The data come from the RNA Mapping Database (RMDB), library RNAMAK. Chemical mapping of a 207-nucleotide RNA with DMS and 2A3. For DMS, 5,145 sequencing reads were counted. Conditions: 150 mM KOAc, 10 mM MgCl2 and 150 mM bicine (pH 8.5), 24 C. 2A3 is a SHAPE reagent: it acylates the 2'-hydroxyl of flexible nucleotides of all four kinds. For 2A3 the reverse transcriptase was SuperScript II with manganese.
RNA sequence: GGGAACGACUCGAGUAGAGUCGAAAACGUUAGAUUCGUCUAACGCGAGCGUCCUAAGUCAGGAUGCACUUGGAUUUAGCUUAGACAUGUCGGAAACGACAACAGCUAAGCUUGUCAGUGCUCCUGAUAUGGAAUCAAAGUGGCUUUCGAGCCACAACUAUAGAGGGUCAUUCGUGACCCUCUAUAGAAAAGAAACAACAACAACAAC
Reactivity to DMS in 0.01 (KOAc 150mM, MgCl2 10mM, bicine 150mM(pH8.5), 24C), signal-to-noise 2, nucleotides 027 to 156: c000g020u010u000a010g020a080u010u010c270g040u000c000u010a000a000c000g030c010g000a100g030c080g020u000c000c000u000a120a300g020u000c000a030g020g000a040u000g030c000a010c010u010u000g060g020a040u000u000u030a010g020c000u000u000a040g020a090c040a300u000g010u000c010g000g000a160a140a280c020g010a040c000a020a090c100a200g000c000u000a010a020g010c000u000u000g000u000c010a050g040u010g000c010u000c000c000u000g010a010u000a140u000g010g000a090a100u020c070a060a150a140g000u020g020g020c010u000u000u000c180g010a050g000c000c000a000c010a010a090
Reactivity to 2A3 in 0.01 (KOAc 150mM, MgCl2 10mM, bicine 150mM(pH8.5), 24C), signal-to-noise 6, nucleotides 027 to 156: c020g000u010u000a000g000a070u050u070c230g010u000c110u000a000a000c010g010c060g060a070g080c130g090u030c000c010u050a200a040g010u000c000a010g000g020a080u250g030c000a010c010u090u180g150g020a060u270u280u190a000g010c000u010u000a000g020a090c020a120u070g010u000c000g030g020a070a050a080c040g010a000c000a050a030c050a050g000c000u000a000a000g000c000u000u010g010u000c000a010g010u000g000c000u000c000c000u000g000a000u000a000u010g020g030a050a040u110c070a120a050a100g000u010g000g000c000u050u120u200c230g080a010g000c000c010a010c010a010a010